[RMDB]
RNA sequence: GGGAACGACUCGAGUAGAGUCGAAAAGAAUAUAAGAGCGCAGUAACUGUGAGAGCAAACUGCGCCCGGACUGUAGGAUCCGGUGGCACAGCAACGCUCACUCACAACACGCUGUGCCACUUGAAGACAUCACGAUCGCGUUCGCGCGAUCGUGAUGAAAAGAAACAACAACAACAAC
Reactivity to 2A3 in 0.01 (KOAc 150mM, MgCl2 10mM, bicine 150mM(pH8.5), 24C), signal-to-noise 1, nucleotides 027 to 126: g080a040a000u180a000u050a120a000g010a030g040c000g000c000a000g000u030a100a060c010u090g050u060g110a050g000a020g090c010a000a110a000c000u000g000c000g030c000c000c010g000g000a000c000u140g090u120a030g030g000a030u000c030c050g040g000u040g010g000c000a000c000a000g030c000a090a090c080g060c020u010c010a010c000u090c030a130c030a110a300c010a060c120g040c000u050g000u020g000c030c000a000c000u000u030g050a060a020g010a010